[RMDB]
RNA sequence: GGGAACGACUCGAGUAGAGUCGAAAAUCCAUUCUAUAAGUGCCCAGACCAUCCUCAAAGAGGAGGUUAAACGACAUAUGAGGGAGAAUGGGAGCAGCUUUAAAAAUGAGAUCAUUCGGGACGCAACCAGACCCUGCAGGUUCGCCUGCAGGGUCUGAAAAGAAACAACAACAACAAC
Reactivity to 2A3 in 0.01 (KOAc 150mM, MgCl2 10mM, bicine 150mM(pH8.5), 24C), signal-to-noise 1, nucleotides 027 to 126: u010c000c000a000u100u110c060u080a030u130a090a170g000u050g170c000c000c000a000g000a060c020c000a200u050c000c000u030c050a300a000a000g090a000g050g000a000g000g000u000u030a120a220a000c060g050a000c040a150u300a040u150g100a050g000g030g010a000g000a000a040u000g000g010g000a000g090c000a050g000c000u000u300u050a080a130a000a000a000u200g030a040g020a080u000c000a000u050u000c000g020g040g000a040c020g000c060a030a000c010
Annotation:
This 177-nucleotide RNA was probed chemically with 2A3. For 2A3, 384 sequencing reads were counted. The data come from the RNA Mapping Database (RMDB), library OK1LIB. The RNA was probed in 150 mM KOAc, 10 mM MgCl2 and 150 mM bicine (pH 8.5) at 24 C.